[RMDB]
RNA sequence: GGGAACGACUCGAGUAGAGUCGAAAAGAUAUGGAGUAUGGUAGAUCAGCAACAGCUACGCUCGGAAACGAGCGUAGACAUGCUGUACCUGUACUCCUAAGUCAAAACCUGUCGUUCGCGACAGGAACCACGGAGUAUUGUUCGCAAUACUCCGUGGAAAAGAAACAACAACAACAAC
Reactivity to DMS in 0.01 (KOAc 150mM, MgCl2 10mM, bicine 150mM(pH8.5), 24C), signal-to-noise 3, nucleotides 027 to 126: g020a070u000a300u010g000g010a020g030u000a020u000g020g030u000a140g010a300u010c030a010g010c010a050a110c300a150g000c000u000a000c000g000c000u000c000g000g000a110a060a130c000g010a020g000c000g020u010a010g000a030c070a130u000g050c000u000g000u000a030c080c000u000g040u000a030c000u000c000c010u000a040a070g000u000c030a100a070a120a250c000c000u020g000u000c000g010u000u000c300g030c010g010a030c000a000g000g010a040a050
Reactivity to 2A3 in 0.01 (KOAc 150mM, MgCl2 10mM, bicine 150mM(pH8.5), 24C), signal-to-noise 2, nucleotides 027 to 126: g020a010u050a030u150g000g000a010g010u010a000u030g040g040u120a080g030a300u220c000a000g060c020a020a110c040a240g050c000u010a010c000g000c010u000c010g030g000a100a110a050c020g010a000g000c010g000u010a000g010a010c000a040u090g000c010u010g000u030a020c020c000u020g000u000a000c000u000c000c000u030a140a020g050u040c060a020a040a110a220c010c000u000g020u000c010g040u060u120c300g030c010g180a000c000a000g000g010a000a000